[RMDB]
Source information:
Structure probing data (DMS and 2A3) for a 207-nucleotide construct. 2A3 is a SHAPE reagent: it acylates the 2'-hydroxyl of flexible nucleotides of all four kinds. Conditions: 150 mM KOAc, 10 mM MgCl2 and 150 mM bicine (pH 8.5), 24 C. The DMS profile rests on 12,025 reads. High DMS reactivity at an A or C suggests that its Watson-Crick edge is free. For 2A3 the reverse transcriptase was SuperScript II with manganese. The 2A3 profile rests on 5,634 reads. Source: RMDB library OK3TST, as collected in RNAgym.
RNA sequence: GGGAACGACUCGAGUAGAGUCGAAAAGAUGUUCUUUGGUGUGGGUACAUCGGGUGGCACAACAAUUACUAUGACGCAUCAUGGUGGUUGUGAACUCUUGGCUUGAUGCGUCAAGUUAGGAGUGUUCUAUGUUACUGUACCCACAGUGAUAUAGAAAACGUAGGUAAUCAUUCGUGAUUACCUACGUAAAAGAAACAACAACAACAAC
Reactivity to DMS in 0.01 (KOAc 150mM, MgCl2 10mM, bicine 150mM(pH8.5), 24C), signal-to-noise 4, nucleotides 027 to 156: g010a110u010g010u000u000c050u000u000u000g020g030u010g030u000g020g020g010u000a030c030a120u000c080g000g010g040u010g000g020c090a080c000a060a070c030a040a080u010u000a040c030u000a060u010g010a090c200g010c130a110u000c020a020u010g010g030u000g010g020u000u000g010u010g000a070a090c040u000c060u000u000g020g010c030u000u000g010a060u010g020c210g020u000c020a010a020g010u000u000a100g000g010a140g020u010g010u000u010c050u000a040u000g010u000u000a040c030u000g010u000a120c050c040c060a170c010a010g010u000g020a060u010a060u000a070g000a080a060a150
Reactivity to 2A3 in 0.01 (KOAc 150mM, MgCl2 10mM, bicine 150mM(pH8.5), 24C), signal-to-noise 6, nucleotides 027 to 156: g100a060u090g020u110u050c060u070u090u140g100g030u030g030u020g020g000g000u010a010c010a060u050c090g060g050g060u160g020g050c040a010c020a120a020c020a050a080u130u060a040c000u030a080u140g010a010c030g020c070a060u010c010a000u060g000g050u040g020g060u070u020g050u060g130a090a060c020u010c000u080u090g060g000c000u010u000g000a000u010g010c040g050u010c000a000a000g000u010u020a030g000g040a060g010u030g050u110u060c050u080a050u070g050u020u070a060c060u030g010u010a010c010c020c000a000c000a000g000u000g010a030u050a030u060a180g100a020a060a000